Structure probing data (DMS) for a 177-nucleotide construct. It was measured as part of the RMDB library TTRDEL. The reactions ran in a buffer of 150 mM KOAc, 10 mM MgCl2 and 150 mM bicine (pH 8.5), at 24 C. Values cover nucleotides 27 to 126. DMS adducts were read by reverse transcription with MarathonRT.

[RMDB]
RNA sequence: GGGAACGACUCGAGUAGAGUCGAAAAGAUAUGGAAACGCUACCCACCGAACUACGACGCCGUGUCGGAAACGACAUCCGUCGCGAGGCGUUUCCUAAGUCAAAACGCAAGAGUUCGCUCUUGCGAAGUAUGUCGGUUCGUUCGCGAACCGACAUACAAAAGAAACAACAACAACAAC
Reactivity to DMS in 0.01 (KOAc 150mM, MgCl2 10mM, bicine 150mM(pH8.5), 24C), signal-to-noise 1, nucleotides 027 to 126: g010a130u020a270u000g000g000a000a010a000c000g060c000u000a140c020c100c050a300c220c080g000a030a020c060u010a270c020g000a000c050g050c300c270g010u010g010u000c000g010g000a080a050a120c010g000a010c000a000u020c100c000g010u010c010g010c060g000a130g000g000c010g030u000u000u000c000c000u000a000a100g000u010c140a100a100a120a170c020g000c000a000a000g030a000g000u000u000c260g000c020u000c000u000u000g010c000g010a010a000